[RMDB]
RNA sequence: GGGAACGACUCGAGUAGAGUCGAAAAUAGAAGCAAUCGAAGGCGAAGCAAUCAUGUACUUCGAUCAGGGUAUCAGUAUCGUUCACUCGGACGAGUCUGAGGAUGAUGACGAAAUCUCUCACGAAGAGGUUCAGGACUUCCUUGAGGAACUGGAAGAAUCACCCAAGGGAUUCGUCCCUUGGGUGAUAAAAGAAACAACAACAACAAC
Reactivity to 2A3 in 0.01 (KOAc 150mM, MgCl2 10mM, bicine 150mM(pH8.5), 24C), signal-to-noise 3, nucleotides 027 to 156: u100a030g090a090a020g000c060a010a080u040c000g020a010a010g080g010c040g090a060a010g070c080a030a160u100c020a050u130g090u170a140c010u000u030c000g040a050u040c000a050g070g040g000u050a070u110c020a010g010u050a070u060c010g010u000u040c020a090c250u070c100g020g000a000c010g010a020g150u020c020u010g000a000g020g050a010u070g010a010u050g030a060c050g020a010a060a010u010c020u000c000u010c000a060c230g090a170a020g000a010g020g000u050u020c010a030g030g050a000c000u030u000c000c000u010u070g040a060g050g000a070a080c070u030g020g010a030a020g020a040
Reactivity to DMS in 0.01 (KOAc 150mM, MgCl2 10mM, bicine 150mM(pH8.5), 24C), signal-to-noise 2, nucleotides 027 to 156: u010a050g000a110a090g000c020a030a070u000c000g010a060a050g020g010c060g000a080a110g030c040a130a150u000c120a150u000g000u000a050c030u000u010c000g030a080u000c030a090g040g000g010u000a080u000c040a070g000u000a100u000c010g010u000u000c060a190c070u000c100g030g020a090c020g020a080g020u000c010u000g000a070g020g020a100u000g030a130u000g000a190c070g020a100a090a110u000c030u000c020u000c060a260c190g000a100a060g000a020g050g020u000u010c040a080g030g010a110c050u000u010c020c020u000u000g020a070g020g020a030a030c060u000g000g010a120a100g010a140
This 207-nucleotide RNA was probed chemically with 2A3 and DMS. It was measured as part of the RMDB library OK3TST.